Description: Chemical mapping of a 177-nucleotide RNA with DMS and 2A3. For 2A3 the reverse transcriptase was SuperScript II with manganese. The reactions ran in a buffer of 150 mM KOAc, 10 mM MgCl2 and 150 mM bicine (pH 8.5), at 24 C.
RNA sequence: GGGAACGACUCGAGUAGAGUCGAAAACUUUAUUAGCGCUAUUUCUACCGAUCAAGCCAGUAUUUGCUGUCUAUACCAGUAUUACUGACACCUGGUAUAUGCGUUGGCUAAAGCCUUAUGUGGAUUACUCAUCAAAAUAGUUCGCUAUUUUGAUGAGAAAAGAAACAACAACAACAAC
Reactivity to DMS in 0.01 (KOAc 150mM, MgCl2 10mM, bicine 150mM(pH8.5), 24C), signal-to-noise 5, nucleotides 027 to 126: c030u000u010u010a060u010u010a050g010c020g010c020u000a130u000u000u010c120u010a040c040c030g010a070u020c210a090a110g020c020c000a030g010u000a050u010u000u010g010c020u000g010u000c130u020a080u000a100c300c010a010g000u000a050u000u000a090c090u000g000a040c040a100c220c070u010g000g010u000a010u010a030u010g000c030g010u000u000g010g000c160u000a030a050a050g000c040c040u000u000a060u000g020u010g010g010a230u010u000a210
Reactivity to 2A3 in 0.01 (KOAc 150mM, MgCl2 10mM, bicine 150mM(pH8.5), 24C), signal-to-noise 5, nucleotides 027 to 126: c010u060u100u060a050u040u100a060g010c010g000c040u030a070u050u220u090c050u040a050c000c020g050a080u100c080a110a010g000c020c010a020g020u030a100u050u090u100g010c020u030g010u050c070u130a100u050a110c040c000a000g010u030a040u070u060a040c040u030g050a020c010a030c020c040u050g010g000u020a040u000a010u070g010c010g010u020u020g020g010c010u020a060a030a010g040c020c010u130u150a170u160g090u070g020g010a010u060u080a060

For 2A3, 6,592 sequencing reads were counted.
Reactivities are given for positions 27 through 126.